[RMDB]
RNA sequence: GGGAACGACUCGAGUAGAGUCGAAAAUAGAGGCUCUGCCUUCGAAACACCAUCGAUCGUCCCUUCUUCUUUACCUUCUCCUGGCUCUUCCGAUGAGACGCGACCGGUGGCAUCACCUCUCGGUUCGUCCCAACCUGCUUUUUGUCUAUCUGAGCCUGUAGUAAAGGCUGUUCGCAGCCUUUACUACAAAAGAAACAACAACAACAAC
Reactivity to 2A3 in 0.01 (KOAc 150mM, MgCl2 10mM, bicine 150mM(pH8.5), 24C), signal-to-noise 2, nucleotides 027 to 156: u230a010g130a040g020g030c010u020c060u150g040c020c020u030u050c020g090a130a130a030c070a070c090c020a060u020c030g030a070u030c000g070u000c000c000c000u060u050c070u080u070c040u090u170u140a140c060c040u080u030c040u030c010c070u050g040g000c080u010c000u170u040c050c040g070a090u090g020a020g010a020c010g000c060g030a020c010c010g020g020u010g020g030c020a060u060c040a050c020c000u000c000u040c030g000g000u040u060c020g000u030c000c020c000a040a060c010c060u060g080c110u150u070u070u120u120g060u040c050u040a080u030c010u000g000a000g070c000c000u010